[RMDB]
RNA sequence: GGGAACGACUCGAGUAGAGUCGAAAAAACUGUUACAUCAGUGUUGGGAAGCUGAUGCCAAGGUAUACAUAUGUAUUUUUGUUAUUGUUUAGAAUUCUGAAAUUUCUCUUGUUUGGCUUUCAGUUUUUAAAACUUAGGGUAAUAAAAUUCAUUACAACAUGUACGCUAGUUUCGACUAGCGUACAUGAAAAGAAACAACAACAACAAC
Reactivity to 2A3 in 0.01 (KOAc 150mM, MgCl2 10mM, bicine 150mM(pH8.5), 24C), signal-to-noise 1, nucleotides 027 to 156: a000a000c050u070g050u080u050a000c000a020u010c010a050g010u030g030u130u200g050g000g040a020a050g000c010u000g000a010u020g020c050c030a020a020g000g040u110a060u140a190c060a050u260a110u130g060u050a130u050u090u020u000u000g010u010u000a070u040u010g000u040u060u000a050g000a000a040u090u010c040u030g040a040a040a130u080u230u020c080u030c000u010u150g050u100u110u050g010g020c000u030u050u050c010a010g060u000u090u080u110u080a070a190a010a000c000u090u070a060g060g080g060u000a020a020u000a070a080a040a010u140u100c070a040u060u110a020c010a060a000